This 177-nucleotide RNA was probed chemically with DMS and 2A3. For 2A3 the reverse transcriptase was SuperScript II with manganese. The RNA was probed in 150 mM KOAc, 10 mM MgCl2 and 150 mM bicine (pH 8.5) at 24 C. For 2A3, 836 sequencing reads were counted. For DMS the reverse transcriptase was MarathonRT.

RNA sequence: GGGAACGACUCGAGUAGAGUCGAAAAACGAGGAACCUCGGGGGGAUUCUCCCAAGAAGGUCCAAGAGAAAUCCUCAAGAAGAGGACUGAUCCCCAUGACGCCAAGGAAACUCUUGGAAGGGGAAAGGAAUAUGUAUUGCUUCGGCAAUACAUAUUCAAAAGAAACAACAACAACAAC
Reactivity to DMS in 0.01 (KOAc 150mM, MgCl2 10mM, bicine 150mM(pH8.5), 24C), signal-to-noise 1, nucleotides 027 to 126: a090c050g000a250g000g010a080a020c070c010u010c050g040g020g000g020g000g010a150u000u000c050u000c020c000c000a090a030g020a090a100g010g000u000c010c030a160a180g030a170g010a050a030a180u000c000c000u000c010a150a160g080a100a200g000a040g010g020a000c060u010g010a130u000c010c000c060c020a080u000g010a090c220g000c030c030a040a080g000g000a140a120a280c090u010c000u000u010g010g040a080a050g000g000g000g000a160a040a070g000
Reactivity to 2A3 in 0.01 (KOAc 150mM, MgCl2 10mM, bicine 150mM(pH8.5), 24C), signal-to-noise 1, nucleotides 027 to 126: a040c040g050a070g050g000a070a080c040c010u020c060g080g000g000g000g000g220a060u300u140c000u000c030c000c030a070a030g050a040a000g060g060u000c010c040a080a020g080a010g000a020a140a020u010c020c020u020c050a010a010g180a120a020g020a050g000g010a010c030u100g090a190u110c020c020c010c020a030u090g060a070c120g000c050c000a030a000g050g000a300a210a270c060u030c000u110u020g050g000a030a060g010g000g000g000a000a080a000g100